[RMDB]
RNA sequence: GGGAACGACUCGAGUAGAGUCGAAAAGAUAUGGAGGAGGGGGAGCAGAUAUUCGGAAACGAAUAUACUGCGACGAUCCUCCUCCUAAGUCAAAAGGUGCAUUGCAUGUUCGCAUGCAAUGCACCAAGCAUAAUGGGAUGUUCGCAUCCCAUUAUGCAAAAGAAACAACAACAACAAC
Reactivity to 2A3 in 0.01 (KOAc 150mM, MgCl2 10mM, bicine 150mM(pH8.5), 24C), signal-to-noise 1, nucleotides 027 to 126: g000a010u020a050u070g020g020a020g000g000a020g050g010g010g000g020a030g000c000a000g000a010u000a000u000u000c000g010g060a040a000a050c000g000a000a000u030a010u050a300c000u000g000c020g010a010c010g020a010u020c010c000u010c000c000u000c000c000u000a000a000g010u010c010a030a010a090a230g020g000u010g030c000a010u010u020g010c000a000u020g020u060u170c300g020c170a010u000g000c000a030a000u000g010c000a000c000c000a000a010
Reactivity to DMS in 0.01 (KOAc 150mM, MgCl2 10mM, bicine 150mM(pH8.5), 24C), signal-to-noise 2, nucleotides 027 to 126: g020a050u000a300u000g000g020a010g000g030a040g030g030g030g010g030a280g020c000a020g010a050u010a000u010u000c010g020g000a060a060a200c010g000a020a000u000a000u000a060c000u000g020c010g020a140c080g010a120u000c000c000u000c000c000u000c000c000u000a000a070g000u010c040a110a090a080a090g010g000u000g000c000a000u010u000g000c000a000u000g000u000u000c250g020c020a000u000g000c000a010a000u000g010c010a000c010c000a020a040